[RMDB]
Chemical mapping of a 177-nucleotide RNA with 2A3 and DMS.
The 2A3 profile rests on 1,122 reads.
It was measured as part of the RMDB library 15KREP.
The reactions ran in a buffer of 150 mM KOAc, 10 mM MgCl2 and 150 mM bicine (pH 8.5), at 24 C.
2A3 is a SHAPE reagent: it acylates the 2'-hydroxyl of flexible nucleotides of all four kinds.
For 2A3 the reverse transcriptase was SuperScript II with manganese.

RNA sequence: GGGAACGACUCGAGUAGAGUCGAAAAUUUCUUGAUGGUUCUCUUGGCCUUCCGGAGCCUUCUCUCGAGAUCGUCCGCAUCCUUUCUUGCCUGCACCCACUUUUCGAGGAUGUCUUCCCUUCCUCCCGAUUCCGUAGAAGUUCGCUUCUACGGAAUCAAAAGAAACAACAACAACAAC
Reactivity to 2A3 in 0.01 (KOAc 150mM, MgCl2 10mM, bicine 150mM(pH8.5), 24C), signal-to-noise 1, nucleotides 027 to 126: u050u070u000c010u010u070g020a050u060g010g090u100u120c050u000c000u090u140g010g000c000c000u080u020c010c030g090g010a050g020c000c040u070u040c010u000c000u000c010g020a030g030a300u050c000g070u030c000c010g020c030a070u060c040c000u060u050u070c040u050u060g070c000c020u020g020c020a050c050c000c000a050c100u020u070u050u060c050g030a040g080g000a090u040g050u000c000u010u030c000c010c000u050u000c000c000u010c000c020c030
Reactivity to DMS in 0.01 (KOAc 150mM, MgCl2 10mM, bicine 150mM(pH8.5), 24C), signal-to-noise 1, nucleotides 027 to 126: u000u000u000c030u000u000g020a040u010g000g020u000u010c060u000c110u030u000g000g020c020c020u000u000c050c060g010g000a120g000c130c020u000u020c020u000c030u010c000g020a060g000a100u010c040g020u000c000c060g000c110a040u000c050c060u000u000u000c030u010u000g000c030c020u000g020c050a080c050c030c030a050c090u000u000u000u000c090g010a050g010g000a050u020g000u000c040u020u000c010c000c010u030u010c000c000u010c010c060c080